[RMDB]
RNA sequence: GGGAACGACUCGAGUAGAGUCGAAAACCAGUCAUCUUGUGCCACUUCGGUGCGCAGAUGGGCGAGGUGUCCGGUCCCAUGAGUCAAAAGCCGGUAAGAACCUCUGGCCCGAGGUCGCUCGUCAGGACCUUAUAGUAGAGUUCGCUCUACUAUAAGGAAAAGAAACAACAACAACAAC
Reactivity to 2A3 in 0.01 (KOAc 150mM, MgCl2 10mM, bicine 150mM(pH8.5), 24C), signal-to-noise 6, nucleotides 027 to 126: c000c000a010g110u060c020a030u000c020u080u180g020u040g100c090c020a040c030u060u050c120g080g000u110g000c060g000c030a020g020a140u080g020g010g040c020g020a060g030g050u050g030u010c010c000g000g050u070c040c000c020a120u160g050a020g100u090c050a080a080a060a040g030c030c010g040g020u060a070a070g070a080a050c000c010u010c040u090g100g010c000c030c020g010a020g020g000u020c010g000c020u030c020g080u030c030a030g000g080a040
Reactivity to DMS in 0.01 (KOAc 150mM, MgCl2 10mM, bicine 150mM(pH8.5), 24C), signal-to-noise 5, nucleotides 027 to 126: c000c010a180g010u010c060a040u000c020u000u010g030u000g010c120c030a030c040u000u010c110g020g020u000g020c030g010c020a020g010a030u000g020g020g010c020g010a060g010g020u000g000u000c020c010g000g000u000c010c010c030a130u000g010a080g000u000c060a070a070a110a170g010c030c020g010g010u010a100a080g010a120a050c020c010u000c010u000g010g020c070c060c030g000a020g010g010u000c100g010c010u010c040g010u000c040a090g010g000a250